Record summary
Structure probing data (DMS and 2A3) for a 177-nucleotide construct.
RNA sequence: GGGAACGACUCGAGUAGAGUCGAAAACUUCAAUUUUAAUUGUUCCCGAGGUGGGUUCGAUAAGUCGAUUGAUCAUUUUCAUGAGAGUGGUCUUACCGCUUCCUGAAGAACCCAGCAAGACAAGGGAGUUUUAAAUUUAGUUCGCUAAAUUUAAAACAAAAGAAACAACAACAACAAC
Reactivity to DMS in 0.01 (KOAc 150mM, MgCl2 10mM, bicine 150mM(pH8.5), 24C), signal-to-noise 5, nucleotides 027 to 126: c070u000u010c070a060a060u010u010u010u020a050a150u010u010g000u000u000c000c000c010g010a180g010g030u000g010g020g020u000u000c000g000a160u010a030a020g010u010c060g020a120u010u000g000a020u000c010a030u000u000u010u000c130a160u000g010a130g000a020g040u000g010g000u000c030u000u010a080c070c030g000c080u000u000c160c120u000g000a110a160g000a020a020c010c000c010a050g010c050a120a090g020a090c190a060a110g010g010g000a150
Reactivity to 2A3 in 0.01 (KOAc 150mM, MgCl2 10mM, bicine 150mM(pH8.5), 24C), signal-to-noise 3, nucleotides 027 to 126: c030u190u130c040a100a190u120u100u240u300a190a120u150u090g040u040u020c010c000c000g010a050g060g120u030g000g010g040u010u020c020g020a060u010a240a030g110u160c010g020a050u000u060g000a000u000c000a010u030u060u090u050c120a120u240g130a020g000a000g290u010g000g000u000c000u020u060a070c020c020g020c040u050u030c040c080u080g050a130a090g000a000a000c000c000c010a000g060c030a010a010g050a060c010a040a030g080g040g000a040
The 2A3 profile rests on 2,296 reads.